[RMDB]
RNA sequence: GGGAACGACUCGAGUAGAGUCGAAAAAGUUUGUAUUAGGCCUGUUAAAUUCUCCCAGGUCAUGCCUAUUGGUGUUUACAGACGAGUAUGGUAUAGACCAUAUAUUACUAUUCUCUCUCUCAGGAGAGGAGAAUAGAUGCAUACAAAGGAGAAGCAAGGUCCUGCUAUUAUUCGUAAUAGCAGGACCAAAAGAAACAACAACAACAAC
Reactivity to DMS in 0.01 (KOAc 150mM, MgCl2 10mM, bicine 150mM(pH8.5), 24C), signal-to-noise 1, nucleotides 027 to 156: a110g050u000u000u010g000u000a140u000u000a150g050g010c000c000u000g010u000u000a060a040a250u000u000c030u000c040c010c000a120g000g050u000c000a110u000g000c010c000u000a130u000u000g040g020u000g000u000u000u000a130c180a190g010a090c080g010a130g020u020a010u020g000g070u000a090u000a170g000a110c000c000a050u000a020u000a090u000u000a160c010u000a020u010u000c000u000c010u010c000u000c000u020c200a300g080g000a050g010a020g000g000a060g010a070a000u000a020g000a070u000g010c150a070u000a110c030a030a110a120g000g000a070g010a080a160g020c080a080a240
Reactivity to 2A3 in 0.01 (KOAc 150mM, MgCl2 10mM, bicine 150mM(pH8.5), 24C), signal-to-noise 2, nucleotides 027 to 156: a010g030u040u000u020g060u040a060u050u120a150g010g030c010c000u000g020u060u050a080a180a150u060u010c010u010c000c000c000a000g000g030u020c010a010u060g000c000c000u180a230u150u250g060g000u030g040u030u130u000a060c050a030g020a000c000g020a020g060u000a020u060g030g070u050a160u130a260g130a070c010c000a000u020a010u000a050u040u140a040c000u000a010u000u000c000u000c000u000c010u000c010u020c100a060g010g300a030g010a010g050g000a010g010a010a000u000a000g000a000u080g030c040a080u100a230c020a000a110a040g000g010a010g000a040a000g070c130a110a040
An RNA of 207 nucleotides, treated with DMS and 2A3 and read out base by base. For 2A3 the reverse transcriptase was SuperScript II with manganese. Source: RMDB library OK3TST, as collected in RNAgym. The reactions ran in a buffer of 150 mM KOAc, 10 mM MgCl2 and 150 mM bicine (pH 8.5), at 24 C. The 2A3 profile rests on 784 reads.